[RMDB]
RNA sequence: GGGAACGACUCGAGUAGAGUCGAAAAUCGUCGUCAUCCUUGGCUAACCGCUCAAGUUCCUCCUCUUCCUCUCGGCUGAGGUGCUUCCCUCCCGCGGCCAGCUGCUUCUUCUUGUUCUCCAGGGCCUAUCGGUGCGUGUUCGCACGCACCAAAAGAAACAACAACAACAAC
Reactivity to 2A3 in 0.01 (KOAc 150mM, MgCl2 10mM, bicine 150mM(pH8.5), 24C), signal-to-noise 4, nucleotides 027 to 129: u040c010g050u000c010g060u040c000a050u030c030c030u030u040g010g000c040u050a060a030c050c040g000c030u090c090a050a030g010u030u030c010c010u000c000c020u040c010u030u040c030c000u000c000u000c000g030g010c020u030g060a040g010g040u030g010c020u040u030c000c010c000u010c010c000c000g040c010g020g000c000c000a040g010c000u020g040c000u020u010c000u060u010c000u070u080g030u050u000c040u000c010c010a040g020g030g020c000c030u040a070u110c050
Reactivity to DMS in 0.01 (KOAc 150mM, MgCl2 10mM, bicine 150mM(pH8.5), 24C), signal-to-noise 2, nucleotides 027 to 129: u060c070g000u000c030g020u030c040a000u000c040c020u000u000g030g040c050u050a070a050c100c090g000c050u000c080a010a030g010u000u000c040c010u020c000c030u030c040u020u040c060c010u020c050u000c000g000g020c050u040g030a020g040g000u040g040c060u020u030c000c000c000u040c020c040c060g000c000g050g000c050c000a050g020c080u020g000c070u010u040c050u000u000c040u020u030g020u000u020c030u040c000c060a090g010g000g030c090c000u050a050u030c100